The data come from the RNA Mapping Database (RMDB), library OK2TRN. The record gives the reactivity of an RNA of 177 nucleotides to 2A3 and DMS. Reactivities are rounded to 0.1 and cut off at 0 and 3. 2A3 adducts were read by reverse transcription with SuperScript II with manganese.

RNA sequence: GGGAACGACUCGAGUAGAGUCGAAAACAAAGGGAUGAAGAGGCUGGAACUUGAGCAUGCACAGAAGUUUAUAACACGCCUCUAUAGUUGGUUAUUUGAGAAGUCUGGGCGUGACUACAUCCCUGGCUAGUCGUAAAUAUUUCGAUAUUUACGACUAAAAAGAAACAACAACAACAAC
Reactivity to 2A3 in 0.01 (KOAc 150mM, MgCl2 10mM, bicine 150mM(pH8.5), 24C), signal-to-noise 7, nucleotides 027 to 126: c040a010a110a020g010g000g010a010u040g030a070a080g030a020g050g000c060u110g090g030a050a020c010u020u020g010a030g070c040a050u100g030c050a040c010a060g110a110a020g050u040u070u030a090u020a070a020c030a010c080g020c010c000u010c030u060a060u050a090g040u020u040g090g010u080u040a130u100u140u140g150a150g020a190a030g070u010c020u050g000g040g000c040g020u030g010a000c000u010a020c000a010u000c000c000c000u000g010g010c040
Reactivity to DMS in 0.01 (KOAc 150mM, MgCl2 10mM, bicine 150mM(pH8.5), 24C), signal-to-noise 9, nucleotides 027 to 126: c060a110a110a030g010g000g010a020u000g010a170a110g010a040g010g010c020u010g010g010a070a050c040u000u010g010a090g010c040a050u000g010c050a060c050a050g000a030a060g010u000u000u000a070u010a060a100c030a070c140g010c020c020u000c090u010a090u000a060g010u000u000g010g010u000u000a050u000u000u000g010a110g010a100a080g010u000c020u000g000g000g010c020g010u000g000a050c020u000a220c020a020u000c000c000c000u000g000g010c180